Description:
An RNA of 177 nucleotides, treated with DMS and 2A3 and read out base by base. Conditions: 150 mM KOAc, 10 mM MgCl2 and 150 mM bicine (pH 8.5), 24 C. For DMS, 3,021 sequencing reads were counted. 2A3 adducts were read by reverse transcription with SuperScript II with manganese.
[RMDB]
RNA sequence: GGGAACGACUCGAGUAGAGUCGAAAAGUGCGGAGUGAAAUUCAUAGGCGCCUCGCCAAUUUGGCGCAACGCCCCGGUACUCCGCGUAGUCGCGACGUAAACGUUCUGUGUUGGCGUUCAGGCCUCAGCCUACUAUGGCUUUCGAGCCAUAGUAGGCAAAAGAAACAACAACAACAAC
Reactivity to DMS in 0.01 (KOAc 150mM, MgCl2 10mM, bicine 150mM(pH8.5), 24C), signal-to-noise 3, nucleotides 027 to 126: g050u010g000c010g000g060a050g010u010g000a050a070a140u000u000c210a170u060a190g000g010c050g040c130c120u020c100g060c010c000a090a130u050u000u020g010g100c040g000c160a190a210c070g000c010c000c090c110g000g000u030a040c010u000c000c020g010c000g030u000a090g100u000c030g000c060g040a040c030g000u010a090a080a130c060g000u010u010c020u000g000u000g020u000u000g000g000c010g010u000u020c090a080g000g020c030c000u030c120a300
Reactivity to 2A3 in 0.01 (KOAc 150mM, MgCl2 10mM, bicine 150mM(pH8.5), 24C), signal-to-noise 1, nucleotides 027 to 126: g040u080g030c060g000g040a000g020u070g100a000a080a230u250u170c100a060u120a130g000g040c020g000c020c090u040c020g000c000c000a180a150u160u090u160g000g000c000g000c000a000a000c010g000c000c000c020c000g120g050u000a000c010u000c000c000g090c010g000u020a000g000u000c030g020c010g000a000c030g070u020a000a000a200c020g010u070u030c100u110g030u000g020u120u110g010g010c010g000u080u040c050a010g000g000c000c000u040c020a080